[RMDB]
RNA sequence: GGGAACGACUCGAGUAGAGUCGAAAAGCGCGUCGUGUCAGGUACUAGGUGACUCUGAGUGGAAUGGUCUCAGAGACGCCUCGUGCCUCAGCACGGCGGCGCAAACGGUGGCUCUUCGGAGCCACCGCAUAUUGAAGUAGUUCGCUACUUCAAUAUGAAAAGAAACAACAACAACAAC
Reactivity to DMS in 0.01 (KOAc 150mM, MgCl2 10mM, bicine 150mM(pH8.5), 24C), signal-to-noise 5, nucleotides 027 to 126: g010c010g020c010g010u000c000g010u000g020u010c300a030g010g010u000a010c000u000a020g000g010u000g000a090c000u000c010u000g010a020g020u010g020g020a120a120u020g000g010u000c000u000c000a010g000a030g000a070c000g020c000c000u000c080g010u000g000c000c020u000c220a070g000c000a010c000g000g010c000g010g020c000g020c010a040a070a190c020g000g010u000g000g000c000u010c000u000u010c160g020g010a010g000c000c000a000c000c000g010
Reactivity to 2A3 in 0.01 (KOAc 150mM, MgCl2 10mM, bicine 150mM(pH8.5), 24C), signal-to-noise 5, nucleotides 027 to 126: g010c010g000c000g000u010c000g010u000g050u080c020a010g000g000u000a000c010u010a000g020g010u020g030a040c000u000c000u000g000a020g010u100g050g300a250a240u270g170g080u050c010u000c000a010g000a000g010a040c000g000c000c000u000c000g000u000g010c000c000u000c000a000g000c000a000c000g000g000c010g010g010c000g000c000a050a060a000c000g010g000u000g000g000c000u000c000u070u080c280g050g010a000g000c000c000a000c000c000g000